The record gives the reactivity of an RNA of 177 nucleotides to DMS and 2A3. DMS (dimethyl sulfate) methylates the pairing face of unpaired adenines and cytosines.

[RMDB]
RNA sequence: GGGAACGACUCGAGUAGAGUCGAAAAUCAUUCUUGAAGGGACUAACCUAGUAAGCUCCUUCAUGGCUCACUAUGCAUAAGUUUUCGGCAGGAGAUUAAUGAUUAAGGAUGGUAAUGUAUUAAACCGCUUGAACCGUAAGUUCGCUUACGGUUCAAGAAAAGAAACAACAACAACAAC
Reactivity to DMS in 0.01 (KOAc 150mM, MgCl2 10mM, bicine 150mM(pH8.5), 24C), signal-to-noise 2, nucleotides 027 to 126: u000c030a070u000u000c010u000u000g030a030a040g000g000g000a060c030u000a070a130c150c080u000a070g000u010a120a050g020c020u010c090c080u000u010c120a070u000g010g020c010u010c040a110c080u000a060u000g020c070a060u010a060a060g050u000u000u000u000c090g050g010c070a050g010g000a060g000a060u010u000a040a040u010g000a050u000u030a060a030g000g020a100u010g000g000u000a020a050u000g010u010a130u010u000a040a040a100c070c070g000
Reactivity to 2A3 in 0.01 (KOAc 150mM, MgCl2 10mM, bicine 150mM(pH8.5), 24C), signal-to-noise 1, nucleotides 027 to 126: u020c000a000u090u000c000u010u020g050a060a050g040g000g050a020c030u060a110a030c050c000u030a040g110u120a040a000g020c020u000c010c020u020u070c000a060u080g000g020c000u020c000a060c020u130a110u130g030c010a080u080a210a200g000u030u030u030u160c000g000g080c030a020g090g000a050g010a000u050u120a070a000u020g060a000u000u020a000a170g130g000a050u110g030g020u000a110a050u030g010u040a080u080u130a100a110a070c000c000g110

The RNA was probed in 150 mM KOAc, 10 mM MgCl2 and 150 mM bicine (pH 8.5) at 24 C. The data come from the RNA Mapping Database (RMDB), library OK2TRN.